[RMDB]
RNA sequence: GGGAACGACUCGAGUAGAGUCGAAAACUCUUGCACAGAAUCACCUUUCUAUAAUAACCAGUGCAAGAAGGGUUAUUAUACCAUUUAAUGUGCCGAGGCCACGCGGAGUACGAUCGAGGCUACAGCAAAAACGUGAAGUACUUCGGUACUUCACGAAGAACUACGGGUAGUUCGCUACCCGUAGUUCAAAAGAAACAACAACAACAAC
Reactivity to 2A3 in 0.01 (KOAc 150mM, MgCl2 10mM, bicine 150mM(pH8.5), 24C), signal-to-noise 4, nucleotides 027 to 156: c010u000c000u000u010g010c000a000c000a020g090a140a160u140c040a140c050c010u150u280u130c120u120a010u000a030a000u000a000a010c000c000a010g000u010g000c000a000a000g010a000a010g020g000g000u000u000a020u020u010a010u010a060c000c040a150u130u200u190a170a070u180g030u040g070c000c010g040a070g070g000c000c010a030c040g030c020g070g040a100g110u240a050c050g050a170u070c020g010a030g020g000c010u030a040c010a030g000c010a000a050a040a040a040c000g000u000g000a000a000g010u000a000c000u010u040c130g010g000u000a000c000u000u000c020a000c000g000a000a000
Reactivity to DMS in 0.01 (KOAc 150mM, MgCl2 10mM, bicine 150mM(pH8.5), 24C), signal-to-noise 1, nucleotides 027 to 156: c050u020c010u000u000g010c040a050c000a200g030a180a170u010c140a150c060c030u000u010u040c080u000a030u000a060a030u000a000a020c000c020a300g000u000g000c020a070a040g010a070a130g020g010g000u000u000a000u000u000a030u020a110c120c070a180u010u000u000a120a120u010g050u000g010c000c010g000a190g030g030c020c000a080c000g000c040g000g000a240g000u020a050c060g040a080u020c040g000a120g020g020c010u000a040c050a030g010c040a040a080a030a020a120c000g060u000g010a090a050g000u000a000c000u000u030c250g060g000u010a000c010u000u000c010a010c010g050a030a060